RNA sequence: GGGAACGACUCGAGUAGAGUCGAAAAGAAAAACAACAAAUACUCAAUCACCUCAAUGUGAUAUUUGUGAUGCAAAUAAUGUUCAUAAGCGACAUCCAAUUGAGUAUGCAAUUGAUGGAACACGUAGCACAGCUCCUAGUUUCGACUAGGAGCUGUGAAAAGAAACAACAACAACAAC
Reactivity to 2A3 in 0.01 (KOAc 150mM, MgCl2 10mM, bicine 150mM(pH8.5), 24C), signal-to-noise 1, nucleotides 027 to 126: g050a000a110a040a010a000c040a010a030c000a040a150a000u000a050c040u040c040a000a060u070c010a000c010c050u200c150a000a120u240g030u000g060a020u000a070u050u030u100g070u100g090a050u010g030c030a000a060a020u230a100a100u210g070u050u070c070a030u090a190a000g070c060g110a080c000a010u000c030c000a040a000u020u050g000a020g030u160a070u100g050c050a020a040u010u140g000a020u080g060g000a020a030c000a010c170g070u050a060g050
Reactivity to DMS in 0.01 (KOAc 150mM, MgCl2 10mM, bicine 150mM(pH8.5), 24C), signal-to-noise 1, nucleotides 027 to 126: g000a050a150a050a060a090c030a040a070c030a050a080a070u050a040c040u000c010a110a020u000c020a080c050c270u010c250a090a080u010g000u000g000a050u000a080u010u000u020g000u000g020a050u020g010c090a100a040a130u010a100a000u000g000u000u050c090a130u040a040a150g010c110g040a120c050a020u000c050c070a000a070u010u000g010a030g060u010a020u000g000c150a070a100u000u000g010a110u000g010g020a020a040c090a050c210g050u000a110g020
Chemical mapping of a 177-nucleotide RNA with 2A3 and DMS. The RNA was probed in 150 mM KOAc, 10 mM MgCl2 and 150 mM bicine (pH 8.5) at 24 C. It was measured as part of the RMDB library OK2TST. For 2A3, 606 sequencing reads were counted.